[RMDB]
RNA sequence: GGGAACGACUCGAGUAGAGUCGAAAAAAUUCGCCCAAGCUGUCUGCAAGCGGCGAUGACUUUGUCUUGCGUGCCCGUGUGGCUCGCUUGCUCAAGGCCAAGCUGCAGUGGGCGUCCACGUCUGAUCCGAAGACGUAUGCAGGUAUGAGCAAUGUGCCAGUAUGUUGUCGUUCGCGACAACAUACUGAAAAGAAACAACAACAACAAC
Reactivity to DMS in 0.01 (KOAc 150mM, MgCl2 10mM, bicine 150mM(pH8.5), 24C), signal-to-noise 1, nucleotides 027 to 156: a050a080u010u000c040g000c000c010c000a050a200g020c030u000g010u010c020u020g040c090a090a110g020c020g050g030c020g000a080u000g040a020c000u000u010u010g000u000c000u010u000g010c020g040u000g000c030c020c020g000u000g010u000g020g040c000u000c000g000c010u000u000g030c130u010c030a040a030g000g050c020c040a100a290g010c020u030g010c000a300g010u000g010g020g010c000g000u000c030c070a060c040g000u000c010u000g010a160u020c160c090g000a180a060g000a020c000g000u010a050u010g050c040a060g020g040u000a050u000g010a130g020c030a130a070u000g020u000g000c050
Reactivity to 2A3 in 0.01 (KOAc 150mM, MgCl2 10mM, bicine 150mM(pH8.5), 24C), signal-to-noise 3, nucleotides 027 to 156: a000a000u140u090c010g010c010c020c010a000a070g070c050u100g040u110c030u040g030c060a090a050g000c010g060g000c020g080a160u200g000a010c010u050u010u020g000u010c000u010u010g010c010g010u010g040c000c010c000g300u220g120u230g100g060c000u000c000g000c000u000u030g000c010u030c020a020a010g020g000c000c010a000a020g000c000u040g020c010a060g030u050g000g000g000c000g010u050c050c020a000c010g010u000c010u020g080a200u110c050c090g070a020a020g010a000c020g020u030a020u070g000c030a020g020g070u180a150u230g030a050g040c070a070a100u100g040u180g160c010
Description
Chemical mapping of a 207-nucleotide RNA with DMS and 2A3. For DMS the reverse transcriptase was MarathonRT. The 2A3 profile rests on 1,406 reads. It was measured as part of the RMDB library OK3TST. For DMS, 2,937 sequencing reads were counted. The RNA was probed in 150 mM KOAc, 10 mM MgCl2 and 150 mM bicine (pH 8.5) at 24 C.